[RMDB]
RNA sequence: GGGAACGACUCGAGUAGAGUCGAAAACAACCAGCUGACUAACAUAUUACGCGAUGUGGGAGAGGACGCAGUCGAACGCAACCGCAUCUACGUGCCCCGCGAUGAGCUGGACAUGUUCGGCAUCAGCGGCUACGCUUACAUUCGUGUAAGCGUAGCCAAAAGAAACAACAACAACAAC
Reactivity to DMS in 0.01 (KOAc 150mM, MgCl2 10mM, bicine 150mM(pH8.5), 24C), signal-to-noise 2, nucleotides 027 to 126: c100a120a260c000c010a060g000c050u000g040a090c110u000a060a170c110a110u020a080u000u000a050c050g020c300g000a100u000g000u000g000g000g040a300g020a200g030g020a100c080g070c210a130g020u020c020g000a020a140c100g020c040a100a120c020c020g010c020a040u000c010u000a140c020g010u000g000c030c000c010c160g010c060g000a040u000g000a110g010c010u010g030g010a150c110a070u000g040u000u010c000g000g000c100a120u000c080a110g000c150
Reactivity to 2A3 in 0.01 (KOAc 150mM, MgCl2 10mM, bicine 150mM(pH8.5), 24C), signal-to-noise 2, nucleotides 027 to 126: c030a000a080c010c010a030g000c020u000g100a090c040u120a160a030c030a070u140a040u290u240a050c050g010c020g030a030u000g020u040g050g040g010a150g000a030g090g030a050c060g070c110a070g060u090c090g030a140a040c030g030c050a030a000c010c010g030c000a050u050c000u040a080c010g000u030g040c000c010c000c030g060c020g050a100u120g000a010g020c010u030g040g000a000c000a030u060g020u020u050c080g010g000c010a090u020c020a050g040c000
An RNA of 177 nucleotides, treated with DMS and 2A3 and read out base by base. For 2A3 the reverse transcriptase was SuperScript II with manganese. The 2A3 profile rests on 1,535 reads. The RNA was probed in 150 mM KOAc, 10 mM MgCl2 and 150 mM bicine (pH 8.5) at 24 C. It was measured as part of the RMDB library OK2TRN.